[RMDB]
RNA sequence: GGGAACGACUCGAGUAGAGUCGAAAACAGAAAUAGCCAGUGAUAUCUCUUUAUGUGUGGAAAUACAAUGAAAAUUGAGUGAGAGACAUACACAGAGGAAGAAGAAAAAGAGUAAGUUAUAAAAGAAGCAAUCAAACUCCAAAUGGUGCUGCAAACAAGUGGUAAAUUAUUUCGAUAAUUUACCACUAAAAGAAACAACAACAACAAC
Reactivity to DMS in 0.01 (KOAc 150mM, MgCl2 10mM, bicine 150mM(pH8.5), 24C), signal-to-noise 1, nucleotides 027 to 156: c050a210g000a020a060a150u000a080g030c090c080a080g020u000g000a190u010a050u000c000u000c010u000u000u000a040u000g000u000g060u000g040g000a090a070a280u000a000c020a000a130u030g010a050a070a070a070u000u010g000a170g020u000g000a090g010a100g000a110c000a110u000a030c070a050c060a100g000a080g010g000a030a050g010a150a120g000a030a050a050a120a040g000a050g020u000a050a040g020u000u000a070u000a140a080a050a180g020a030a100g000c020a030a050u000c060a060a040a060c020u000c020c010a050a070a170u010g000g040u010g000c010u000g050c020a070a070a020c120a120
Reactivity to 2A3 in 0.01 (KOAc 150mM, MgCl2 10mM, bicine 150mM(pH8.5), 24C), signal-to-noise 2, nucleotides 027 to 156: c030a010g130a040a150a010u060a040g010c030c010a000g040u020g080a080u060a110u120c030u000c020u040u150u030a130u100g090u020g000u060g060g050a080a090a000u160a060c050a040a070u080g050a120a120a040a040u100u070g000a000g050u060g000a020g000a000g000a020c000a010u120a020c050a020c000a010g040a000g000g030a010a030g010a020a000g030a010a150a000a010a000g010a000g010u070a090a000g000u130u000a120u070a240a050a000a020g070a020a040g030c020a020a010u080c020a070a070a000c030u090c060c000a050a050a030u030g000g000u000g010c030u050g060c040a080a020a030c050a100
Record summary:
Structure probing data (DMS and 2A3) for a 207-nucleotide construct. For 2A3 the reverse transcriptase was SuperScript II with manganese. The DMS profile rests on 1,960 reads. For 2A3, 1,059 sequencing reads were counted. 2A3 is a SHAPE reagent: it acylates the 2'-hydroxyl of flexible nucleotides of all four kinds. The reactions ran in a buffer of 150 mM KOAc, 10 mM MgCl2 and 150 mM bicine (pH 8.5), at 24 C.